[RMDB]
RNA sequence: GGGAACGACUCGAGUAGAGUCGAAAAUGUUCUGACCUCUCCACGCCAGAAUGGCCAUUCCCCAGCAACUCUUCUUCUCUGGUGUGGUGAGGGGCGAGAGAGCCAUGCAGUCUGAGCGGGAUGUGGGCAGCAAGGUCAAGUAUGAGGUCACGGUAAGGAUCAUAAGGCCUUUCGAGGCCUUAUGAUCAAAAGAAACAACAACAACAAC
Reactivity to 2A3 in 0.01 (KOAc 150mM, MgCl2 10mM, bicine 150mM(pH8.5), 24C), signal-to-noise 1, nucleotides 027 to 156: u070g000u070u010c050u060g090a070c000c000u000c000u050c000c030a010c040g010c000c020a050g010a100a130u130g100g010c020c000a090u070u070c040c010c000c000a020g010c010a050a260c060u050c040u220u120c060u230u170c080u040c000u060g000g000u000g000u000g000g000u000g000a000g000g000g010g010c040g000a040g010a000g010a000g000c000c010a000u020g010c000a000g010u000c010u040g020a020g020c000g000g030g000a030u050g040u050g050g000g000c020a010g000c020a060a030g050g000u040c000a010a060g020u000a070u150g020a030g000g080u020c050a030c110g000g060u070a060a030g140
An RNA of 207 nucleotides, treated with 2A3 and read out base by base. Values cover nucleotides 27 to 156. The reactions ran in a buffer of 150 mM KOAc, 10 mM MgCl2 and 150 mM bicine (pH 8.5), at 24 C. As a SHAPE reagent, 2A3 marks flexible, mostly unpaired nucleotides at the ribose 2'-OH.